[RMDB]
RNA sequence: GGGAACGACUCGAGUAGAGUCGAAAACGGCGGUCCUUGGACUAACAGCCCCAAGAACGGCCAGUAGUUUUCUUGGCUGAUUGGCUGUUGGCAUGGGGGCGUCUCGUAGCUGGGAGGUCCGGAACGGCGAUAAAUAAUGUUUCGACAUUAUUUAUCGAAAAGAAACAACAACAACAAC
Reactivity to 2A3 in 0.01 (KOAc 150mM, MgCl2 10mM, bicine 150mM(pH8.5), 24C), signal-to-noise 1, nucleotides 027 to 126: c010g030g000c020g000g100u040c000c000u020u060g110g000a080c000u010a000a020c000a030g000c000c000c000c000a090a140g120a300a120c000g000g000c000c000a000g000u030a000g010u060u010u090u070c090u170u190g030g000c020u060g120a230u080u170g010g010c000u010g020u040u010g030g060c100a110u030g020g010g000g010g000c000g000u000c010u000c020g000u030a010g000c000u020g020g000g010a040g030g050u020c000c000g010g030a040a010c000g040g010